[RMDB]
RNA sequence: GGGAACGACUCGAGUAGAGUCGAAAAGGCACGGACGGACACUCCUUCUGACGUACAUUUUCACUCGCAUGGCGAGUCAGAGUCAUGACUGUGAGCGAGUACGAGUGAGGGUCAGUUCGAGUGUGCAGCUGUGCUCACUAUUCGUAGUGGGCACAGCAAAAGAAACAACAACAACAAC
Reactivity to DMS in 0.01 (KOAc 150mM, MgCl2 10mM, bicine 150mM(pH8.5), 24C), signal-to-noise 8, nucleotides 027 to 126: g000g000c060a050c060g000g010a140c110g000g000a060c010a050c020u000c000c040u000u010c010u000g000a050c010g040u010a070c030a060u000u000u000u000c130a030c000u000c020g010c010a050u010g000g010c040g000a040g010u000c030a020g000a200g010u010c190a080u000g010a030c010u000g000u000g000a120g010c030g000a060g010u000a050c150g010a020g010u000g010a180g020g010g000u000c020a020g010u000u000c200g000a040g010u000g000u000g010c080a150
Reactivity to 2A3 in 0.01 (KOAc 150mM, MgCl2 10mM, bicine 150mM(pH8.5), 24C), signal-to-noise 5, nucleotides 027 to 126: g070g000c020a000c040g010g100a010c020g010g000a000c010a000c010u010c000c000u010u010c010u020g030a020c010g060u110a010c020a030u040u020u000u020c020a000c010u000c000g020c010a040u160g100g000c040g090a020g020u010c010a020g040a020g140u120c050a100u020g010a040c010u010g010u030g070a020g010c020g010a010g010u010a010c050g010a010g020u040g020a050g050g130g030u020c020a030g000u010u010c010g000a010g030u040g010u040g040c020a020
Chemical mapping of a 177-nucleotide RNA with DMS and 2A3. It was measured as part of the RMDB library OK2TRN. Values cover nucleotides 27 to 126. For 2A3 the reverse transcriptase was SuperScript II with manganese.